An RNA of 207 nucleotides, treated with 2A3 and DMS and read out base by base. 2A3 adducts were read by reverse transcription with SuperScript II with manganese. The RNA was probed in 150 mM KOAc, 10 mM MgCl2 and 150 mM bicine (pH 8.5) at 24 C.
RNA sequence: GGGAACGACUCGAGUAGAGUCGAAAAGCAUUGCAUUGCUUGUUUCCAAGCUGCAACUCUUAGUGCUGGAGGUAUUGUAGUCACCAUGUCUGAUCUCAAUCUUUUGGCAGGACAAGAGAGCCACCGAUCCUACAGACACAAUUUUGGCUUUUUAAAACUGACUAGUACCUUUCGAGGUACUAGUCAGAAAAGAAACAACAACAACAAC
Reactivity to 2A3 in 0.01 (KOAc 150mM, MgCl2 10mM, bicine 150mM(pH8.5), 24C), signal-to-noise 4, nucleotides 027 to 156: g010c060a030u080u140g040c030a050u060u120g010c030u020u000g030u090u150u020c110c000a010a020g010c020u010g030c000a020a070c010u030c020u110u100a030g040u050g040c030u040g020g010a030g010g050u150a040u040u060g040u100a040g020u040c020a020c060c040a110u140g050u020c070u030g080a130u090c040u000c060a070a160u040c040u010u120u080u040g030g000c030a030g030g020a020c010a060a020g030a020g000a010g100c010c000a050c040c040g030a060u050c000c030u080a070c050a050g120a070c020a010c020a160a130u040u080u110u100g080g010c000u090u040u000u070u160a040a040a080a080
Reactivity to DMS in 0.01 (KOAc 150mM, MgCl2 10mM, bicine 150mM(pH8.5), 24C), signal-to-noise 2, nucleotides 027 to 156: g020c030a040u000u030g020c060a270u000u000g030c020u020u000g010u000u010u030c010c010a090a300g040c020u010g030c040a080a140c050u000c050u000u000a140g060u000g010c050u000g020g000a090g050g010u010a040u010u000g040u000a090g010u000c020a080c050c020a180u030g010u000c030u010g000a120u020c010u000c060a070a070u000c050u000u010u000u010g040g020c070a120g000g000a250c070a080a100g010a120g010a160g020c000c040a050c110c080g020a060u010c010c000u000a190c060a120g000a070c050a090c040a030a160u000u000u000u000g010g020c050u000u040u000u000u000a030a050a160a230